This 207-nucleotide RNA was probed chemically with 2A3. 2A3 adducts were read by reverse transcription with SuperScript II with manganese.

RNA sequence: GGGAACGACUCGAGUAGAGUCGAAAAGAAACGCAAGGCCGCUGACCGACGGGAUAUUGUGGGGCUUACCACAGGGGACCCGGCGUUAUCACUUGCCUUUUAAGCCGACCGUCUGGGCUGCAUACAAACCACCCAACUAUCUUCGGAUAGUUGGGAACUCUUCCACUGUGUUCGCACAGUGGAAGAGAAAAGAAACAACAACAACAAC
Reactivity to 2A3 in 0.01 (KOAc 150mM, MgCl2 10mM, bicine 150mM(pH8.5), 24C), signal-to-noise 1, nucleotides 027 to 156: g010a020a010a000c040g000c060a020a000g010g000c040c050g040c160u020g040a090c010c080g010a010c040g040g020g010a100u090a090u200u080g020u010g010g020g020g080c070u060u140a040c020c020a050c060a030g030g010g000g040a030c000c000c000g050g010c020g010u050u220a040u050c000a000c040u050u080g000c020c000u000u190u000u050a020a040g030c020c000g090a150c000c020g110u110c050u060g000g030g000c000u030g040c060a020u030a250c030a070a040a000c080c020a060c020c030c010a000a000c000u000a000u040c010u050u050c090g080g000a000u010a010g000u000u000g020g010g000a010a000
It was measured as part of the RMDB library M2RFPK.
The 2A3 profile rests on 635 reads.
Values are in units of 0.01, from 0 to 300, in steps of 10.
The RNA was probed in 150 mM KOAc, 10 mM MgCl2 and 150 mM bicine (pH 8.5) at 24 C.